[RMDB]
RNA sequence: GGGAACGACUCGAGUAGAGUCGAAAAAAAAUAAGAAAUGGAGAAGUAACUGACAGCUAUGACAACUACACCUUUCUCAACGCCAGGAAGUUAGGGGAUGAUGUGCCUGCAUACAUAUAUGCCACGGCUUUUGACGUGUGUUCGCACACGUCAAAAGAAAAGAAACAACAACAACAAC
Reactivity to 2A3 in 0.01 (KOAc 150mM, MgCl2 10mM, bicine 150mM(pH8.5), 24C), signal-to-noise 1, nucleotides 027 to 126: a000a000a000a000u140a000a000g000a000a010a070u110g040g000a090g050a140a000g020u000a020a020c050u150g080a040c000a000g020c120u080a040u300g050a090c010a060a030c130u080a090c030a100c000c000u020u040u000c000u000c030a150a060c050g050c020c060a020g050g000a050a000g030u080u200a120g000g020g000g050a070u040g000a000u030g000u110g050c000c030u000g000c020a040u000a100c020a000u190a010u000a000u090g040c000c000a020c040g000g000
Reactivity to DMS in 0.01 (KOAc 150mM, MgCl2 10mM, bicine 150mM(pH8.5), 24C), signal-to-noise 3, nucleotides 027 to 126: a010a000a080a070u060a080a040g010a040a100a020u010g010g010a080g000a040a040g000u010a060a090c080u000g000a030c090a130g020c050u030a060u020g000a060c190a060a070c090u000a100c040a030c040c010u000u000u000c030u000c040a080a070c130g000c040c040a050g000g000a090a090g000u000u000a040g030g000g010g000a030u000g000a050u020g000u010g010c020c010u020g010c020a010u000a040c160a050u030a020u020a030u020g010c000c050a070c140g010g010